[RMDB]
RNA sequence: GGGAACGACUCGAGUAGAGUCGAAAAGAUAUGGACUCAUAUGGACAUGUCCGAAUAUUCGGAAACGAAUAUGGACAACAGCCAUGAUGAGUCCUAAGUCAAAGAACGAGGGUUCGCCCUCGUUCAAGCCUAUUCUAUACUUCGGUAUAGAAUAGGCAAAAGAAACAACAACAACAAC
Reactivity to 2A3 in 0.01 (KOAc 150mM, MgCl2 10mM, bicine 150mM(pH8.5), 24C), signal-to-noise 6, nucleotides 027 to 126: g020a010u050a030u130g000g000a000c000u010c010a010u010a020u040g010g000a070c130a270u210g010u000c000c010g050a200a080u020a000u020u010c010g000g010a020a020a030c000g010a020a000u020a010u040g000g010a000c020a170a070c130a250g060c020c010a050u210g210a060u010g010a060g000u010c000c000u010a000a000g000u000c020a080a000a200g000a000a010c000g000a000g030g040g030u070u150c300g210c020c000c000u010c000g000u000u000c000a000a000
Reactivity to DMS in 0.01 (KOAc 150mM, MgCl2 10mM, bicine 150mM(pH8.5), 24C), signal-to-noise 6, nucleotides 027 to 126: g010a030u000a300u000g010g000a020c000u000c000a010u000a030u000g010g010a090c090a170u010g000u000c000c000g010a130a040u000a010u000u000c010g000g000a070a060a110c000g010a020a010u000a010u010g000g000a020c010a050a060c300a180g000c010c000a010u000g010a020u000g010a020g010u000c000c000u000a000a060g010u010c020a110a120a130g000a010a010c000g020a010g000g010g000u000u010c300g010c000c010c000u000c000g010u000u000c010a060a110